[RMDB]
Overview: The record gives the reactivity of an RNA of 207 nucleotides to DMS and 2A3. The 2A3 profile rests on 1,059 reads. For 2A3 the reverse transcriptase was SuperScript II with manganese. The reactions ran in a buffer of 150 mM KOAc, 10 mM MgCl2 and 150 mM bicine (pH 8.5), at 24 C.

RNA sequence: GGGAACGACUCGAGUAGAGUCGAAAAAAAGACAGGCACUAGUAGGAUGUAAUUUGGGGUGGUUAAAGAAGAUGUGAUGAAUUCAGUUAACGGAGGAGCCAGUGUGAGACCAGGACUUCUAGUACACCUGGUCUAGGACUCUUGCAACCCCUCCACACACUGUAGUUCUCUUCGGAGAACUACAGUGAAAAGAAACAACAACAACAAC
Reactivity to DMS in 0.01 (KOAc 150mM, MgCl2 10mM, bicine 150mM(pH8.5), 24C), signal-to-noise 2, nucleotides 027 to 156: a060a080a090g010a140c030a050g010g020c050a060c020u000a080g010u000a080g020g000a100u000g020u000a040a120u000u000u000g020g000g000g000u000g020g040u000u000a010a050a050g030a100a070g040a110u030g020u000g000a150u000g010a120a130u000u000c050a100g000u000u000a060a070c110g030g010a070g010g010a070g040c030c060a060g020u000g020u010g010a120g020a020c010c030a050g000g030a140c090u000u020c070u010a200g010u000a070c070a220c020c000u000g000g000u000c000u010a090g010g010a100c090u000c040u010u010g010c030a090a030c030c020c000c000u020c010c000a040c090a230
Reactivity to 2A3 in 0.01 (KOAc 150mM, MgCl2 10mM, bicine 150mM(pH8.5), 24C), signal-to-noise 2, nucleotides 027 to 156: a020a000a000g060a010c080a010g010g010c030a000c040u080a040g050u090a090g080g040a070u050g080u130a150a080u080u040u070g000g000g000g000u070g020g020u090u100a110a060a040g040a020a030g020a070u030g010u040g080a060u070g060a020a120u100u050c040a020g030u030u090a130a000c170g010g000a040g010g010a000g010c040c020a010g010u000g020u040g060a040g000a000c020c000a000g030g000a030c000u190u070c070u250a000g040u060a060c020a000c020c040u000g010g000u000c000u000a000g000g010a000c000u000c000u040u030g020c000a000a180c020c020c020c000u000c010c020a030c000a010